[RMDB]
RNA sequence: GGGAACGACUCGAGUAGAGUCGAAAAGAUAUGGAUCGAGGACAUGAGCAGGGUCGGAAACGACCCGGGCUCAACAGCCCGAUCCUAAGUCAAAAGAUCACUAUACUGUUCGCAGUAUAGUGAUCAACAAAUUGAUAUCGUUCGCGAUAUCAAUUUGAAAAGAAACAACAACAACAAC
Reactivity to 2A3 in 0.01 (KOAc 150mM, MgCl2 10mM, bicine 150mM(pH8.5), 24C), signal-to-noise 1, nucleotides 027 to 126: g030a020u080a030u140g000g010a000u020c020g050a300g010g030a040c100a300u080g000a010g000c020a020g000g000g020u000c000g010g040a110a070a020c000g010a000c000c030c000g010g050g000c010u000c000a000a020c020a010g040c000c000c010g000a000u000c000c000u010a090a020g040u010c050a020a000a040a220g000a000u010c000a000c010u000a000u010a000c000u000g080u110u080c300g000c150a000g000u000a000u000a000g000u000g000a000u010c000a000a000
Reactivity to DMS in 0.01 (KOAc 150mM, MgCl2 10mM, bicine 150mM(pH8.5), 24C), signal-to-noise 7, nucleotides 027 to 126: g010a030u000a300u010g000g000a000u000c000g000a140g020g000a090c090a230u010g000a010g020c000a300g010g000g000u000c000g010g000a070a070a190c000g010a010c000c000c000g000g010g010c000u000c010a010a050c230a160g000c010c010c000g000a010u000c000c000u000a010a070g000u010c040a080a080a130a170g000a010u000c000a000c000u000a000u000a000c000u000g010u000u000c190g010c010a010g000u000a000u000a000g010u000g000a000u000c000a030a140
An RNA of 177 nucleotides, treated with 2A3 and DMS and read out base by base. DMS adducts were read by reverse transcription with MarathonRT. For DMS, 10,276 sequencing reads were counted. The data come from the RNA Mapping Database (RMDB), library TTRDEL. For 2A3 the reverse transcriptase was SuperScript II with manganese. The reactions ran in a buffer of 150 mM KOAc, 10 mM MgCl2 and 150 mM bicine (pH 8.5), at 24 C.